[RMDB]
This 207-nucleotide RNA was probed chemically with 2A3.
RNA sequence: GGGAACGACUCGAGUAGAGUCGAAAAGCGUAACGGCUGGGUGUAACCCAACUCUAGGUGUGCUCAUUAGCGGGCUUGACUCCGUAACAAAUAGGCACUGGUGGUAAAAAGCAUCCCACCUACUCACAAAGCUCCAAAUUCUUCGGAAUUUGGAGAAUCAGACCAACAACUUCGGUUGUUGGUCUGAAAAAGAAACAACAACAACAAC
Reactivity to 2A3 in 0.01 (KOAc 150mM, MgCl2 10mM, bicine 150mM(pH8.5), 24C), signal-to-noise 1, nucleotides 027 to 156: g080c020g020u010a020a090c050g030g000c030u010g030g000g050u010g090u120a180a140c020c010c020a100a190c020u110c010u150a150g000g070u010g010u010g060c000u050c110a120u070u070a030g030c030g030g000g000c000u030u090g030a100c040u060c040c000g000u030a040a040c020a010a140a050u050a100g020g030c030a020c130u030g000g000u030g030g000u010a080a300a000a000a000g000c020a070u070c010c010c010a000c040c000u030a050c010u050c090a040c030a030a210a000g010c000u000c000c000a000a000a000u010u020c020u030u020c180g120g000a020a000u020u000u000g000g000a000g000a000a000
The reactions ran in a buffer of 150 mM KOAc, 10 mM MgCl2 and 150 mM bicine (pH 8.5), at 24 C.
2A3 adducts were read by reverse transcription with SuperScript II with manganese.